This 177-nucleotide RNA was probed chemically with DMS.
[RMDB]
RNA sequence: GGGAACGACUCGAGUAGAGUCGAAAACGCAACGUCGUACGUGCUGCUCUUCUUGCCGGUUCAUUUGACAAAGUCUAUGAUAUUGGCAAUCCUAAAGGAAUUCCUAUUGUUGAUGACCCUGUGGUUGCAUGUCUUACUGCUUCGGCAGUAAGACAUGAAAAGAAACAACAACAACAAC
Reactivity to DMS in 0.01 (KOAc 150mM, MgCl2 10mM, bicine 150mM(pH8.5), 24C), signal-to-noise 2, nucleotides 027 to 126: c170g040c040a090a030c060g020u010c100g080u020a220c100g030u000g010c070u010g020c030u000c020u000u000c070u020u000g020c040c010g000g010u000u000c050a010u000u010u000g000a050c030a110a150a160g000u000c020u010a020u000g000a040u000a060u010u000g020g010c050a020a050u000c030c060u020a030a080a070g000g000a080a170u010u000c020c010u010a050u010u020g020u000u000g010a090u000g020a130c040c040c020u010g030u000g010g000u000u010g000

DMS adducts were read by reverse transcription with MarathonRT.
Values cover nucleotides 27 to 126.
Source: RMDB library 15KREP, as collected in RNAgym.